[RMDB]
RNA sequence: GGGAACGACUCGAGUAGAGUCGAAAAGAUAUGGACGAAAGCUCGAUAAGCAGCACUCGGAAACGAGUGUCUGCUUUUGACGAGCUGAGUCCUAAGUCAAACAGGUUCUCCUUCGGGAGAACCUGAAGUCCCUAUCCGUGUUCGCACGGAUAGGGACAAAAGAAACAACAACAACAAC
Reactivity to DMS in 0.01 (KOAc 150mM, MgCl2 10mM, bicine 150mM(pH8.5), 24C), signal-to-noise 1, nucleotides 027 to 126: g000a020u010a100u000g000g000a020c000g000a110a050a000g000c000u000c000g020a100u010a040a030g010c000a000g030c000a000c000u010c010g000g000a030a020a050c000g010a000g000u000g000u050c010u000g000c000u000u000u000u000g020a230c040g000a020g010c000u000g000a300g020u000c000c000u000a000a080g000u000c000a100a170a210c010a000g000g030u000u000c000u000c000c020u030u010c260g040g000g000a010g000a000a000c000c000u000g000a000a020